Notes: This 177-nucleotide RNA was probed chemically with DMS and 2A3. Reactivities are given for positions 27 through 126. The RNA was probed in 150 mM KOAc, 10 mM MgCl2 and 150 mM bicine (pH 8.5) at 24 C. For 2A3 the reverse transcriptase was SuperScript II with manganese.
RNA sequence: GGGAACGACUCGAGUAGAGUCGAAAAGCAAGGUUCGAAACUAAUUAAAUACCCUAGCGCUUAAAGACACUCACCUCCCGCAAAAACAUCCUCGGGUUGGUCUUUUUGAGGGUUUUGAGCGUCGGAUAGAUUAAUCUUUAUUCGUAAAGAUUAAUCUAAAAGAAACAACAACAACAAC
Reactivity to DMS in 0.01 (KOAc 150mM, MgCl2 10mM, bicine 150mM(pH8.5), 24C), signal-to-noise 3, nucleotides 027 to 126: g010c080a120a100g020g020u010u000c060g000a170a110a120c060u000a070a130u020u030a070a100a090u010a110c020c010c010u000a110g010c080g010c020u010u010a060a060a050g010a020c020a030c010u010c030a090c080c040u000c010c000c000g020c180a030a040a080a110a060c110a050u010c080c070u010c090g000g000g010u000u000g000g010u030c020u000u010u010u000u000g000a030g010g020g000u000u010u020u000g000a020g000c040g000u010c040g010g020a280u030
Reactivity to 2A3 in 0.01 (KOAc 150mM, MgCl2 10mM, bicine 150mM(pH8.5), 24C), signal-to-noise 5, nucleotides 027 to 126: g060c050a060a100g060g020u130u100c060g100a130a060a060c050u090a050a130u210u080a120a100a080u200a130c020c010c000u010a020g010c010g000c020u010u010a100a020a010g070a010c010a000c020u000c000a030c010c000u000c000c020c000g000c030a080a110a040a040a060c030a070u110c030c070u040c020g000g000g000u070u030g040g010u030c050u110u270u060u070u100g010a010g000g000g000u000u010u000u030g010a000g010c020g040u050c040g030g010a020u040